Structure probing data (2A3 and DMS) for a 177-nucleotide construct. Reactivities are given for positions 27 through 126. DMS adducts were read by reverse transcription with MarathonRT.
[RMDB]
RNA sequence: GGGAACGACUCGAGUAGAGUCGAAAAAUGUGGUCAUGAAAACCUACGCCCCAGGCAGCUUUCCUCCCGACAACCAGACCUGGAUCAGAAAUUGGUCAAACGGGCAGUGGAUGACGGAUGCAUACGCGAUGACCAGGUGAUUCGUCACCUGGUCAUCAAAAGAAACAACAACAACAAC
Reactivity to 2A3 in 0.01 (KOAc 150mM, MgCl2 10mM, bicine 150mM(pH8.5), 24C), signal-to-noise 3, nucleotides 027 to 126: a000u160g030u110g070g010u020c020a080u270g110a010a050a060a070c000c000u020a010c010g030c030c000c000c000a020g080g000c010a010g060c070u040u010u010c000c030u030c000c000c000g060a080c100a100a030c070c020a010g030a120c020c010u100g110g000a050u060c020a000g150a150a110a110u300u050g040g020u010c000a000a090a060c080g010g050g000c010a060g010u100g050g010a050u080g050a020c000g010g060a040u060g060c000a070u110a110c120g010c040
Reactivity to DMS in 0.01 (KOAc 150mM, MgCl2 10mM, bicine 150mM(pH8.5), 24C), signal-to-noise 1, nucleotides 027 to 126: a110u040g000u000g030g000u000c030a090u100g060a030a090a060a100c000c030u000a080c000g000c050c030c000c050a160g000g000c000a110g010c070u030u020u010c010c000u000c090c020c010g000a010c120a000a140c030c020a090g000a000c020c030u000g000g000a070u000c050a090g030a130a010a200u020u000g000g000u000c050a090a170a300c080g000g050g030c080a030g010u000g020g060a030u000g000a090c130g120g030a180u000g000c110a120u010a140c160g000c140